[RMDB]
RNA sequence: GGGAACGACUCGAGUAGAGUCGAAAACAAGCGUGACGCGCGCCACUAGGCCGGCGCGACCCGCGAAUAACCCCAGGGGUUAUCCUAGACCGUGUACACGGCGGGCCGCUGGGUGGGGACUACACACCACCACCAAUUGGUUCGCCAAUUGGUGGUGAAAAGAAACAACAACAACAAC
Reactivity to 2A3 in 0.01 (KOAc 150mM, MgCl2 10mM, bicine 150mM(pH8.5), 24C), signal-to-noise 2, nucleotides 027 to 126: c030a090a070g030c000g040u040g010a060c060g000c000g000c010g030c080c010a080c090u140a110g110g050c070c140g050g000c010g030c010g000a040c000c020c000g000c010g060a060a130u120a070a040c060c020c000c000a020g040g030g040g030u090u150a110u080c000c020u080a120g140a300c010c020g020u060g050u110a090c070a020c210g050g000c020g000g020g000c040c000g070c030u010g010g000g040u050g040g020g000g050a000c040u160a040c120a000c010a020c030
Reactivity to DMS in 0.01 (KOAc 150mM, MgCl2 10mM, bicine 150mM(pH8.5), 24C), signal-to-noise 3, nucleotides 027 to 126: c090a140a200g000c030g040u000g000a090c100g020c000g040c010g020c000c010a110c140u000a100g000g000c120c220g020g000c020g000c010g000a060c080c080c030g000c040g020a150a060u000a070a090c130c000c000c060a010g020g000g010g030u000u010a050u010c040c030u000a110g010a190c010c000g000u000g000u040a090c170a020c030g010g010c020g010g000g000c000c010g000c040u000g000g000g020u010g000g000g010g010a200c080u010a050c190a090c070a090c110
Annotation: An RNA of 177 nucleotides, treated with 2A3 and DMS and read out base by base. DMS (dimethyl sulfate) methylates the pairing face of unpaired adenines and cytosines. The RNA was probed in 150 mM KOAc, 10 mM MgCl2 and 150 mM bicine (pH 8.5) at 24 C. For DMS the reverse transcriptase was MarathonRT.